[RMDB]
RNA sequence: GGGAACGACUCGAGUAGAGUCGAAAAGAUAUGGAUAUGUUGAAGCAUCGAUCGAUAAGGGUCGGAAACGACCCAUCGGGAGCUUCUACAUAUCCUAAGUCAAAAGGAUAUGGUUCGCCAUAUCCAACAUGGACCAAAAGUUCGCUUUUGGUCCAUGAAAAGAAACAACAACAACAAC
Reactivity to 2A3 in 0.01 (KOAc 150mM, MgCl2 10mM, bicine 150mM(pH8.5), 24C), signal-to-noise 2, nucleotides 027 to 126: g030a000u020a000u060g000g000a020u000a010u020g010u010u050g010a010a000g000c010a020u300c050g010a020u000c000g060a010u010a300a300g000g010g000u020c000g010g000a030a010a020c000g010a000c000c040c010a010u000c000g030g020g010a010g000c020u030u000c010u000a000c000a000u000a010u010c000c000u000a000a000g020u000c040a020a000a110a240g010g000a010u000a010u020g020g100u020u230c300g060c090c000a000u000a000u000c010c000a000a000
Reactivity to DMS in 0.01 (KOAc 150mM, MgCl2 10mM, bicine 150mM(pH8.5), 24C), signal-to-noise 2, nucleotides 027 to 126: g000a010u000a100u010g000g010a000u010a020u000g000u000u000g020a020a000g000c010a300u000c280g000a020u010c010g000a030u010a240a170g000g000g010u000c000g010g000a040a030a100c000g020a010c000c000c010a010u000c000g000g010g010a000g020c000u000u000c010u000a020c000a000u000a000u010c000c000u000a000a060g020u010c020a100a140a200a140g010g000a010u000a000u000g010g010u010u010c300g030c000c000a010u000a000u000c000c000a090a070

Conditions: 150 mM KOAc, 10 mM MgCl2 and 150 mM bicine (pH 8.5), 24 C. The record gives the reactivity of an RNA of 177 nucleotides to 2A3 and DMS. Values cover nucleotides 27 to 126. For DMS, 1,896 sequencing reads were counted. It was measured as part of the RMDB library TTRDES.